Conditions: 150 mM KOAc, 10 mM MgCl2 and 150 mM bicine (pH 8.5), 24 C. The record gives the reactivity of an RNA of 177 nucleotides to 2A3 and DMS.
RNA sequence: GGGAACGACUCGAGUAGAGUCGAAAAUCUUUGCGCUUCGGCGCAAAGAAAACGCCUGCUGCUCCGUGACCGGUCCGUGAGACCGUCGGUCCAGCCCGCCGAAAACUAUGGUGUUCGCACCAUAGAACUAGUAUGCACUGUUCGCAGUGCAUACUAGAAAAGAAACAACAACAACAAC
Reactivity to 2A3 in 0.01 (KOAc 150mM, MgCl2 10mM, bicine 150mM(pH8.5), 24C), signal-to-noise 3, nucleotides 027 to 126: u000c010u050u000u010g000c020g000c000u040u080c290g140g000c000g000c020a020a000a010g000a050a080a000a000c050g030c000c010u020g040c010u010g000c000u010c030c000g080u060g080a070c040c020g000g000u030c040c020g280u170g070a220g000a040c010c000g070u100c030g020g020u000c030c000a020g010c000c030c030g060c020c040g130a090a070a030a030c010u000a000u000g000g000u000g010u040u050c250g000c070a000c000c000a000u000a010g010a010a000
Reactivity to DMS in 0.01 (KOAc 150mM, MgCl2 10mM, bicine 150mM(pH8.5), 24C), signal-to-noise 3, nucleotides 027 to 126: u000c000u000u000u000g010c010g000c000u000u020c200g060g020c000g000c000a010a000a010g000a010a050a100a100c180g010c010c010u000g010c020u010g000c020u000c010c020g010u000g010a090c200c020g040g000u000c000c030g010u010g030a180g020a030c000c020g020u000c020g000g000u010c070c030a040g000c020c050c060g000c050c060g000a080a050a070a140c010u000a000u000g010g020u000g010u000u010c180g020c010a010c000c010a020u000a020g000a080a140
Source: RMDB library M2PK50, as collected in RNAgym.